This 207-nucleotide RNA was probed chemically with DMS and 2A3.
Source: RMDB library ARCHII, as collected in RNAgym.
As a SHAPE reagent, 2A3 marks flexible, mostly unpaired nucleotides at the ribose 2'-OH.
Reactivities are rounded to 0.1 and cut off at 0 and 3.
[RMDB]
RNA sequence: GGGAACGACUCGAGUAGAGUCGAAAAUUCAUGCCGUUCGCGGCAUGAAAACCAGGAUCCGUGGCGCAAUGGUAGCGCGUCUGACUCCAGAUCAGAAGGUUGCGUGUUCGAUUCACGUCGGGUUCACCACCGGGUAACAGUCUUUCGAGACUGUUAAGAACCAUUGUUUGUUCGCAAACAAUGGUUCAAAAGAAACAACAACAACAAC
Reactivity to DMS in 0.01 (KOAc 150mM, MgCl2 10mM, bicine 150mM(pH8.5), 24C), signal-to-noise 2, nucleotides 027 to 156: u020u000c020a070u030g000c030c000g040u020u010c280g050c030g050g060c010a000u000g010a000a000a010a090c050c050a270g010g020a010u000c010c080g010u000g000g000c000g010c010a060a060u000g020g000u010a040g000c050g040c020g010u030c020u000g070a090c010u010c100c250a180g000a130u000c030a060g010a090a050g000g000u000u000g000c000g000u030g000u000u000c020g000a300u000u000c020a030c040g020u000c050g010g000g020u000u000c010a070c030c020a060c050c000g000g000g030u000a010a020c020a010g000u000c000u000u000u000c300g030a100g050a030c010u000g000u000u000a060a220
Reactivity to 2A3 in 0.01 (KOAc 150mM, MgCl2 10mM, bicine 150mM(pH8.5), 24C), signal-to-noise 2, nucleotides 027 to 156: u030u020c000a010u030g000c030c020g070u060u100c250g020c020g120g000c010a000u010g000a000a000a010a010c030c040a000g020g000a010u000c010c000g000u010g010g010c010g000c020a030a040u120g080g090u100a030g000c000g000c000g000u000c000u010g010a000c030u080c240c120a090g070a300u010c000a000g020a020a000g000g010u060u030g010c000g010u030g030u030u000c000g000a000u010u010c000a000c010g020u010c000g000g010g000u030u030c010a040c010c020a060c030c070g170g000g040u020a010a000c000a010g010u010c030u030u130u200c240g030a000g000a010c010u000g010u000u010a020a020